[RMDB]
RNA sequence: GGGAACGACUCGAGUAGAGUCGAAAAAAUGAGUAGCGUAGAUAUUCUGGUCCCUGACCUGCCUGAAUCCGUAGCCGAUGCCACCGUCGCAACCUGGCAUAAAAAACCCGGCGACGCAGUCGUACGAUAUAGUACCUCGUUUCGACGAGGUACUAUAAAAAGAAACAACAACAACAAC
Reactivity to DMS in 0.01 (KOAc 150mM, MgCl2 10mM, bicine 150mM(pH8.5), 24C), signal-to-noise 1, nucleotides 027 to 126: a060a070u010g020a070g020u020a030g010c060g030u000a140g000a040u000a040u000u000c050u000g000g000u020c040c000c050u010g020a120c080c060u010g030c030c010u000g010a080a050u010c110c050g000u010a100g010c070c030g010a050u010g010c050c050a020c080c040g030u010c090g010c080a040a150c060c050u000g020g030c050a020u020a000a090a110a050a030a090c060c070c030g010g000c000g010a100c030g010c180a070g010u000c040g060u010a080c140g030a190
Overview:
An RNA of 177 nucleotides, treated with DMS and read out base by base. The RNA was probed in 150 mM KOAc, 10 mM MgCl2 and 150 mM bicine (pH 8.5) at 24 C. Reactivities are given for positions 27 through 126. The DMS profile rests on 682 reads. For DMS the reverse transcriptase was MarathonRT.